RNA sequence: GGGAACGACUCGAGUAGAGUCGAAAAACGGGUCGACCGGUCGGCCGCGUGCCACAGUCUCCAGCGCGGUUUGCAACGUGCCGACUGAAACCGUGGAGGCGCCAAGACGGGUGACAGCUUCGAGCCAGUACGACCUAACAUUCGUGUUAGGUCGUACAAAAGAAACAACAACAACAAC
Reactivity to DMS in 0.01 (KOAc 150mM, MgCl2 10mM, bicine 150mM(pH8.5), 24C), signal-to-noise 2, nucleotides 027 to 126: a110c050g010g030g010u020c010g020a090c120c000g000g040u000c010g020g000c160c180g000c030g020u000g000c000c040a040c030a110g000u000c080u010c080c080a070g010c070g010c020g010g000u000u000u010g020c130a100a070c130g030u020g000c000c000g000a090c030u000g010a030a070a020c030c030g060u000g010g010a090g000g010c030g030c030c040a170a120g010a040c040g000g010g000u000g000a070c070a030g000c050u000u000c080g000a090g000c030c030a100
Reactivity to 2A3 in 0.01 (KOAc 150mM, MgCl2 10mM, bicine 150mM(pH8.5), 24C), signal-to-noise 1, nucleotides 027 to 126: a000c040g050g000g030u030c020g080a080c020c000g100g040u000c000g020g020c040c010g000c030g000u040g030c010c000a030c020a050g010u010c020u060c130c040a040g000c090g030c060g200g100u040u150u140g000c040a090a070c070g070u100g030c000c000g040a010c020u010g010a060a020a000c010c000g000u040g000g020a030g100g000c000g020c010c000a000a000g000a020c010g010g000g070u050g020a030c020a050g040c000u100u100c040g030a020g060c050c000a020